[RMDB]
RNA sequence: GGGAACGACUCGAGUAGAGUCGAAAAUGAUCUAUGCUUUGAUUCUGUCCGGGCAAAUGCAACGUAUCAAGGAUAUCCUCUUGGGACAGCACUGGCUCGUCCGAUAAUCGCAGAAUCGAUCGUAUCCGUUGCUAAGGCUGAGAAUUGCGAUGCACUCCUGUGGAUUUUAGUUCGCUAAAAUCCACAGAAAAGAAACAACAACAACAAC
Reactivity to DMS in 0.01 (KOAc 150mM, MgCl2 10mM, bicine 150mM(pH8.5), 24C), signal-to-noise 2, nucleotides 027 to 156: u000g000a060u000c040u000a070u000g050c060u000u000u000g010a080u000u000c020u020g000u000c060c010g000g010g000c020a060a020a040u000g000c020a060a050c100g020u010a040u000c070a030a030g010g010a270u010a170u000c070c020u010c040u000u000g000g030g010a030c010a300g000c000a060c030u000g010g020c010u000c020g000u000c030c030g010a120u000a040a080u000c070g000c040a080g000a080a070u000c000g020a020u000c070g040u000a110u000c040c040g000u000u010g000c020u000a070a130g040g060c050u000g010a190g010a070a110u020u000g000c010g020a110u010g000c100a090c050u000c000
Reactivity to 2A3 in 0.01 (KOAc 150mM, MgCl2 10mM, bicine 150mM(pH8.5), 24C), signal-to-noise 5, nucleotides 027 to 156: u090g010a020u010c040u130a050u110g080c030u060u070u100g020a040u110u010c030u030g070u070c070c020g000g010g010c020a050a040a040u100g010c030a080a070c110g020u060a030u070c000a030a020g050g000a090u040a160u260c040c050u060c020u050u040g020g000g020a000c010a020g010c010a040c090u090g090g000c020u010c070g020u030c020c010g050a070u100a130a050u140c020g000c020a000g050a070a050u060c060g020a020u040c000g050u040a100u060c000c030g050u030u040g000c040u060a080a090g050g000c040u040g040a010g030a190a130u100u090g030c040g030a030u060g020c040a020c050u050c010